RNA sequence: GGGAACGACUCGAGUAGAGUCGAAAACAUGAGGCGCCGGUUGCGCUCGGCGACAAGCUGGAGAUCAUCUCCCACGUUCACCCGGCUGGUUCGACCGAGAUAUUCGGCCCGGGGUUGGUCGACCGCGCUCGCCAGUCAGCUUCGGCUGACUGGCGAGAAAAGAAACAACAACAACAAC
Reactivity to 2A3 in 0.01 (KOAc 150mM, MgCl2 10mM, bicine 150mM(pH8.5), 24C), signal-to-noise 1, nucleotides 027 to 126: c090a230u180g020a140g140g000c050g070c020c010g000g070u090u070g020c070g030c080u000c000g000g000c020g000a000c020a000a000g040c050u090g030g010a050g000a020u030c000a150u050c100u120c050c050c000a060c020g050u070u050c010a220c100c000c000g000g000c000u040g030g140u300u040c000g080a090c050c000g000a000g020a050u020a170u030u080c050g000g020c080c000c010g090g000g070g000u080u120g020g030u020c000g000a030c000c010g020c000g010
Conditions: 150 mM KOAc, 10 mM MgCl2 and 150 mM bicine (pH 8.5), 24 C. Chemical mapping of a 177-nucleotide RNA with 2A3. The 2A3 profile rests on 363 reads. Source: RMDB library OK1LIB, as collected in RNAgym.